[RMDB]
This 177-nucleotide RNA was probed chemically with DMS and 2A3. DMS adducts were read by reverse transcription with MarathonRT. It was measured as part of the RMDB library M2PK50. The reactions ran in a buffer of 150 mM KOAc, 10 mM MgCl2 and 150 mM bicine (pH 8.5), at 24 C. For 2A3, 2,697 sequencing reads were counted.
RNA sequence: GGGAACGACUCGAGUAGAGUCGAAAAUCUAUGGUCUUCGGACCAUAGAAAAUAAGAAUCGGAAGCAUGAGAACCGACACAAACAUGCAAACGCGAAAGCGAAAACAAUCCAGUUCGCUGGAUUGAACUAUAUUCCCACGUUCGCGUGGGAAUAUAGAAAAGAAACAACAACAACAAC
Reactivity to DMS in 0.01 (KOAc 150mM, MgCl2 10mM, bicine 150mM(pH8.5), 24C), signal-to-noise 2, nucleotides 027 to 126: u030c010u000a000u000g020g000u000c000u000u020c240g010g010a000c000c020a000u000a000g010a000a030a080a090u000a120a120g010a130a150u000c000g000g020a190a120g020c000a010u000g010a110g010a090a030c020c000g000a080c300a040c220a010a010a070c010a000u000g080c010a160a070a100c030g010c010g000a040a130a090g010c020g010a050a040a100a140c010a010a000u000c000c000a010g020u010u000c240g040c010u020g000g000a010u000u000g010a090a130
Reactivity to 2A3 in 0.01 (KOAc 150mM, MgCl2 10mM, bicine 150mM(pH8.5), 24C), signal-to-noise 2, nucleotides 027 to 126: u000c000u010a000u000g010g010u000c010u000u050c240g100g010a000c010c000a000u000a000g000a010a010a000a000u120a020a040g070a040a070u030c000g000g000a050a060g000c000a000u000g000a020g030a130a020c010c010g130a030c050a010c050a160a030a000c010a010u000g000c000a070a070a000c020g000c010g030a060a010a010g020c000g020a010a010a010a080c010a000a000u010c000c000a000g010u070u050c170g090c070u000g000g000a010u010u000g000a020a000